[RMDB]
This 177-nucleotide RNA was probed chemically with 2A3 and DMS. Reactivities are given for positions 27 through 126. For 2A3, 1,418 sequencing reads were counted.
RNA sequence: GGGAACGACUCGAGUAGAGUCGAAAAAUUUCUUUAGGAAAUUCUCUUUGCUGGGGCCCGGCCUACCAGGCAAGGAUGACUAGGUUUGAAAAAAGCUUGAUUCAAGUACAUUUUCAAAUCAGUCAAUUUAUUGUUUUGAUUUCGAUCAAAACAAUAAAAAAGAAACAACAACAACAAC
Reactivity to 2A3 in 0.01 (KOAc 150mM, MgCl2 10mM, bicine 150mM(pH8.5), 24C), signal-to-noise 3, nucleotides 027 to 126: a000u030u040u010c030u100u160u160a140g080g030a020a080a030u120u010c010u010c000u040u050u030g010c010u010g000g020g010g050c040c140c000g100g010c010c010u060a120c030c040a020g140g000c020a020a020g080g000a040u040g000a000c000u050a100g000g000u010u010u010g020a030a000a000a020a020a000g020c010u070u060g040a280u300u240c020a000a000g000u000a020c000a160u010u000u010u010c000a000a010a010u000c000a000g000u010c000a000a000u010
Reactivity to DMS in 0.01 (KOAc 150mM, MgCl2 10mM, bicine 150mM(pH8.5), 24C), signal-to-noise 1, nucleotides 027 to 126: a010u000u010u000c010u010u000u070a170g000g010a030a050a020u000u040c100u040c020u000u000u020g010c060u000g000g000g000g000c000c030c090g010g010c060c060u010a060c060c040a080g000g000c010a010a030g000g020a100u020g000a010c000u000a180g010g030u010u000u010g000a000a000a020a000a100a150g010c000u000u010g000a250u040u080c040a010a010g030u000a090c080a170u000u010u000u000c000a020a010a010u000c010a030g000u000c010a010a030u040